[RMDB]
RNA sequence: GGGAACGACUCGAGUAGAGUCGAAAAACUUGUGUGAGAAUACUUUUAGUACAAGCGAGUACACGCAGUAUACUGCCACUUGUGUGAGAAUACUUUUAGUACAAGCGAGUACACGCAGUAUAGUGCCGUUGAUUACAGUUUUCGAACUGUAAUCAACAAAAGAAACAACAACAACAAC
Reactivity to 2A3 in 0.01 (KOAc 150mM, MgCl2 10mM, bicine 150mM(pH8.5), 24C), signal-to-noise 9, nucleotides 027 to 126: a010c050u090u070g020u010g020u050g060a090g090a120a100u140a160c000u040u060u060u150a070g010u010a020c040a060a080g100c080g110a030g050u040a020c050a010c080g000c000a000g040u010a010u010a030c020u040g020c010c010a030c020u050u050g020u010g010u040g090a090g110a120a050u060a060c010u050u140u150u250a070g010u010a010c010a050a000g030c010g020a010g020u050a060c020a010c050g000c000a000g010u020a020u030a040g170u040g030c030c040
Reactivity to DMS in 0.01 (KOAc 150mM, MgCl2 10mM, bicine 150mM(pH8.5), 24C), signal-to-noise 6, nucleotides 027 to 126: a120c070u010u000g000u020g020u000g010a100g000a160a100u030a030c050u000u010u030u030a170g000u000a010c030a080a160g020c140g000a190g000u010a030c030a080c190g000c140a000g020u000a020u000a010c000u010g000c040c110a060c040u020u010g000u010g010u020g000a110g010a110a140u010a020c030u010u030u030u010a100g010u000a010c040a040a200g010c060g000a130g000u040a030c090a100c300g010c060a040g020u010a010u010a020g000u010g010c070c140
An RNA of 177 nucleotides, treated with 2A3 and DMS and read out base by base. The data come from the RNA Mapping Database (RMDB), library OK1LIB. The 2A3 profile rests on 17,113 reads. The RNA was probed in 150 mM KOAc, 10 mM MgCl2 and 150 mM bicine (pH 8.5) at 24 C.